[RMDB]
RNA sequence: GGGAACGACUCGAGUAGAGUCGAAAACAGGAGGCGACGCCGCUGUAUCUCAGCGGCCUCCCCGCGGAACGCGAGAACGGGGAGCGACCCGAUCUCUACGGGAUCGCGACCGGGGACGCCGGGGAGCGCGUUAGGAUUAUUUCGAUAAUCCUAACGCAAAAGAAACAACAACAACAAC
Reactivity to 2A3 in 0.01 (KOAc 150mM, MgCl2 10mM, bicine 150mM(pH8.5), 24C), signal-to-noise 5, nucleotides 027 to 126: c030a030g110g060a050g040g080c050g040a050c080g030c010c000g000c000u020g040u170a300u110c200u020c040a010g000c000g000g000c000c000u000c000c000c000c000g000c070g030g080a280a060c030g020c030g040a030g020a120a010c010g020g000g000g050a020g020c010g030a070c000c020c020g070a220u050c060u000c030u160a070c000g000g000g100a160u010c000g000c000g020a020c000c010g010g000g000g010a010c010g020c040c010g000g000g000g010a040g050c080
Reactivity to DMS in 0.01 (KOAc 150mM, MgCl2 10mM, bicine 150mM(pH8.5), 24C), signal-to-noise 7, nucleotides 027 to 126: c060a110g000g000a100g030g010c050g010a150c190g020c000c000g030c010u000g010u010a150u010c220u000c000a040g020c010g010g000c010c240u000c010c000c000c020g000c140g010g000a150a110c060g010c080g010a060g000a260a210c030g000g000g000g000a140g010c080g000a100c030c010c020g000a090u010c070u000c100u010a090c010g000g000g000a170u000c000g010c010g000a150c020c000g000g000g000g000a160c040g020c040c030g000g010g000g010a130g020c290
Structure probing data (2A3 and DMS) for a 177-nucleotide construct. The DMS profile rests on 7,975 reads. The reactions ran in a buffer of 150 mM KOAc, 10 mM MgCl2 and 150 mM bicine (pH 8.5), at 24 C. For 2A3, 15,374 sequencing reads were counted. Source: RMDB library OK2TRN, as collected in RNAgym.